The data come from the RNA Mapping Database (RMDB), library TTRDEL. Structure probing data (DMS) for a 177-nucleotide construct. Reactivities are rounded to 0.1 and cut off at 0 and 3. Conditions: 150 mM KOAc, 10 mM MgCl2 and 150 mM bicine (pH 8.5), 24 C.

[RMDB]
RNA sequence: GGGAACGACUCGAGUAGAGUCGAAAAGAUAUGGAUCCGAAGAGCGACGAUCUACUGUCGGAAACGAUGUAGGGAGCUCUAAGGAUCCUAAGUCAAAGGUUACAGCGAGUUCGCUCGCUGUAACCAACUAUUAUUUCCAGUUCGCUGGAAAUAAUAGAAAAGAAACAACAACAACAAC
Reactivity to DMS in 0.01 (KOAc 150mM, MgCl2 10mM, bicine 150mM(pH8.5), 24C), signal-to-noise 6, nucleotides 027 to 126: g010a010u000a110u010g000g010a010u000c000c000g000a260a080g010a010g010c000g010a120c240g000a040u010c000u000a000c010u020g050u000c010g000g000a030a020a050c000g010a020u000g000u000a010g010g000g000a010g010c000u000c000u010a060a230g000g000a010u000c000c000u000a000a080g000u000c010a090a110a130g010g010u000u010a000c000a000g010c000g010a020g010u000u010c240g010c000u000c000g020c000u000g000u000a000a000c000c000a020a040
Record summary: DMS adducts were read by reverse transcription with MarathonRT. The DMS profile rests on 11,262 reads.